[RMDB]
RNA sequence: GGGAACGACUCGAGUAGAGUCGAAAAGCUAGUCGGAGACGACUAGCAACGAUCAGUUCGCUGAUCGGAACGUGCAUUCGAAUACGCUAGAAGCACGAAUAGGCGACGCAUAGCGUACCACAGAGGAAGCUCAUGACAUGAAUAACAAGGCGUCGCGGACUCGCUAAUAUUUCGAUAUUAGCGAGUCAAAAGAAACAACAACAACAAC
Reactivity to 2A3 in 0.01 (KOAc 150mM, MgCl2 10mM, bicine 150mM(pH8.5), 24C), signal-to-noise 4, nucleotides 027 to 156: g000c000u000a000g000u010c010g030g040a050g030a100c010g000a000c010u000a000g000c000a000a010c000g000a000u000c000a010g050u040u110c170g000c100u020g000a000u000c000g020g060a060a010c010g010u010g010c060a300u010u020c000g010a070a040u050a040c030g010c020u020a010g000a020a000g010c000a000c010g000a030a070u210a090g030g000c000g000a000c000g000c010a070u070a060g000c010g020u020a030c020c050a110c070a080g070a020g080g060a120a070g070c030u050c080a090u140g020a080c030a080u140g080a140a080u180a190a050c080a040a020g070g000c000g000u000c000g000c000g000
Reactivity to DMS in 0.01 (KOAc 150mM, MgCl2 10mM, bicine 150mM(pH8.5), 24C), signal-to-noise 1, nucleotides 027 to 156: g020c010u000a000g020u010c000g000g000a260g000a240c020g000a030c020u000a020g000c100a010a040c020g040a030u000c000a000g010u000u000c250g000c070u010g020a000u000c020g000g000a100a170c000g030u000g000c000a300u000u000c000g000a130a080u000a040c070g020c020u000a070g010a050a160g010c000a020c020g010a140a150u000a120g070g000c040g020a020c010g030c030a220u000a020g020c000g030u000a060c020c040a180c090a120g010a090g010g000a170a140g030c050u000c030a190u020g000a080c070a190u000g000a110a070u020a010a040c040a010a080g020g020c010g060u000c000g070c000g090

About this RNA
An RNA of 207 nucleotides, treated with 2A3 and DMS and read out base by base. High 2A3 reactivity points to a flexible backbone, as in loops and unpaired stretches. The reactions ran in a buffer of 150 mM KOAc, 10 mM MgCl2 and 150 mM bicine (pH 8.5), at 24 C. For DMS the reverse transcriptase was MarathonRT. Values cover nucleotides 27 to 156.